The record gives the reactivity of an RNA of 207 nucleotides to 2A3 and DMS. 2A3 adducts were read by reverse transcription with SuperScript II with manganese. High DMS reactivity at an A or C suggests that its Watson-Crick edge is free. The DMS profile rests on 3,598 reads. Reactivities are given for positions 27 through 156. The data come from the RNA Mapping Database (RMDB), library OK3TST.

RNA sequence: GGGAACGACUCGAGUAGAGUCGAAAACGAUGUAGAUGUGGAAGAGUUUGCUAAUGUCAUUGUGCAGAAUAUAGGAUCAUUAAAAAAGCAACCUGAAUUGGCGCGUUGUGGGCGUGCAUUUAAAAUCAUUCUAGACUCGGUUACAAUGCUUAAAACCCAAUCUCGCUAGAUUCGUCUAGCGAGAUUGAAAAGAAACAACAACAACAAC
Reactivity to 2A3 in 0.01 (KOAc 150mM, MgCl2 10mM, bicine 150mM(pH8.5), 24C), signal-to-noise 4, nucleotides 027 to 156: c060g020a010u060g060u120a050g010a120u040g030u040g060g010a060a000g030a030g050u030u100u080g030c050u110a070a040u080g050u060c030a040u050u120g020u030g030c050a030g040a190a010u150a010u050a090g010g030a050u050c020a060u050u220a030a080a030a020a030a000g030c020a010a030c000c010u040g050a120a100u050u070g070g000c020g000c000g080u040u060g020u050g040g040g020c010g000u020g010c000a000u020u070u210a090a150a000a010u090c010a030u000u100c020u040a030g000a090c010u010c050g010g000u000u010a030c040a100a000u050g000c010u070u100a070a110a060a030c000c040
Reactivity to DMS in 0.01 (KOAc 150mM, MgCl2 10mM, bicine 150mM(pH8.5), 24C), signal-to-noise 2, nucleotides 027 to 156: c040g010a080u000g030u000a050g020a080u010g020u000g030g040a050a060g000a090g000u010u010u000g030c040u000a040a090u020g010u010c070a120u000u000g020u000g050c030a070g010a070a060u000a120u010a070g010g000a080u010c060a120u020u000a010a040a070a050a070a150g010c050a100a130c000c010u000g020a090a180u000u000g010g000c040g000c100g000u000u000g000u010g020g000g030c040g010u000g020c040a160u000u000u000a030a050a080a060u000c050a040u000u010c040u000a070g010a060c030u000c040g030g010u000u000a080c030a030a110u000g020c020u000u000a030a040a080a170c120c040